[RMDB]
Structure probing data (DMS) for a 177-nucleotide construct.
RNA sequence: GGGAACGACUCGAGUAGAGUCGAAAACUUGAGCCAAUGUAGUAAUUGCAAAACAACCCCCUUGAGGUAAAUCAUAUUCUACCCAUGCUCCCUCAGCGGAAAUUUUACCCACUUCAAGUCCAAGUGAUAAAUAAAUGCGGUUCGCCGCAUUUAUUUAAAAAGAAACAACAACAACAAC
Reactivity to DMS in 0.01 (KOAc 150mM, MgCl2 10mM, bicine 150mM(pH8.5), 24C), signal-to-noise 2, nucleotides 027 to 126: c060u010u010g030a110g010c050c050a040a130u010g020u000a090g000u020a080a100u010u000g000c060a070a080a090a110c090a090a160c040c040c020c030c030u010u000g000a040g020g000u000a040a050a050u000c100a030u000a220u010u010c060u000a060c020c040c040a080u000g000c060u000c030c020c020u000c070a040g030c110g000g010a040a030a090u000u000u000u000a130c030c040c020a110c020u000u000c080a040a070g000u000c070c020a050a050g010u020g020a200
The DMS profile rests on 1,208 reads. It was measured as part of the RMDB library OK2TST.